[RMDB]
Conditions: 150 mM KOAc, 10 mM MgCl2 and 150 mM bicine (pH 8.5), 24 C.
Chemical mapping of a 177-nucleotide RNA with 2A3 and DMS.
Values are in units of 0.01, from 0 to 300, in steps of 10.
It was measured as part of the RMDB library OK1LIB.
DMS adducts were read by reverse transcription with MarathonRT.
For 2A3, 3,762 sequencing reads were counted.
RNA sequence: GGGAACGACUCGAGUAGAGUCGAAAAACACACUGAGCGCCACGCCCACGUGGGCUCCACCGCGGUUGCCGAUCUCGGGGGAGAUUAGUCCGGAGUUGGGGGCAAGCCGCCUCUGAGCACGACGAGAGGCUCGUUACGCGUUCGCGCGUGGCGAGCCAAAAGAAACAACAACAACAAC
Reactivity to 2A3 in 0.01 (KOAc 150mM, MgCl2 10mM, bicine 150mM(pH8.5), 24C), signal-to-noise 4, nucleotides 027 to 126: a000c090a000c040a000c050u050g030a000g030c060g110c040c000a030c030g020c000c000c010a160c020g040u050g010g030g000c000u000c010c000a070c020c010g030c020g020g040u040u100g040c030c030g030a060u010c010u010c030g040g000g010g050g010a060g010a060u080u090a050g080u020c030c030g060g010a080g020u120u080g100g000g000g000g010c020a040a030g070c010c030g020c010c000u000c020u010g060a030g050c030a030c090g100a040c060g030a070g030a040
Reactivity to DMS in 0.01 (KOAc 150mM, MgCl2 10mM, bicine 150mM(pH8.5), 24C), signal-to-noise 3, nucleotides 027 to 126: a070c140a080c090a060c030u020g000a090g020c050g000c010c010a040c010g030c060c040c090a110c040g000u030g000g000g020c060u000c050c040a140c120c110g000c060g020g000u010u020g000c060c000g000a070u010c010u010c000g020g020g010g010g000a090g000a090u010u020a170g010u040c000c010g000g040a070g030u020u020g010g000g000g010g010c040a030a070g000c070c090g010c020c030u000c020u020g000a060g020c080a070c130g000a050c070g010a070g020a190